[RMDB]
RNA sequence: GGGAACGACUCGAGUAGAGUCGAAAACGGUUCGCCGGGGUGUUCUGGAGCGAAUUGUCCAGCGGGGGUGUGGUGAUCGCCGGGGCCGGCGCCUGGCUGGAUUGCCGCCCGUACGCGGAGAUCCCGGCACUUUCGUAUUCUUCGGAAUACGAAAGUGAAAAGAAACAACAACAACAAC
Reactivity to 2A3 in 0.01 (KOAc 150mM, MgCl2 10mM, bicine 150mM(pH8.5), 24C), signal-to-noise 1, nucleotides 027 to 126: c010g010g020u050u050c000g000c000c000g040g030g000g020u130g110u240u110c050u060g110g040a140g110c080g060a090a130u110u170g040u050c030c010a030g030c040g010g000g000g060g010u160g070u180g020g020u020g000a000u010c030g000c000c000g000g050g020g040c080c120g060g080c120g050c000c010u030g030g000c020u080g140g070a010u040u020g000c020c000g000c020c000c010g000u050a020c020g000c020g000g000a040g000a060u050c000c000c000g030g070
Reactivity to DMS in 0.01 (KOAc 150mM, MgCl2 10mM, bicine 150mM(pH8.5), 24C), signal-to-noise 2, nucleotides 027 to 126: c070g000g000u000u000c060g020c000c000g020g000g000g040u020g000u010u000c020u000g030g010a140g000c030g000a040a090u000u000g020u000c020c010a100g030c040g010g000g000g000g010u010g030u000g020g020u000g010a030u000c010g000c020c010g000g000g020g030c030c060g000g010c130g010c000c010u010g000g010c020u000g020g020a010u000u010g020c010c010g010c000c000c030g020u000a050c060g010c030g010g000a120g000a040u000c010c000c000g010g010

This 177-nucleotide RNA was probed chemically with 2A3 and DMS. Reactivities are given for positions 27 through 126. For DMS, 4,589 sequencing reads were counted. DMS (dimethyl sulfate) methylates the pairing face of unpaired adenines and cytosines. For 2A3, 1,318 sequencing reads were counted.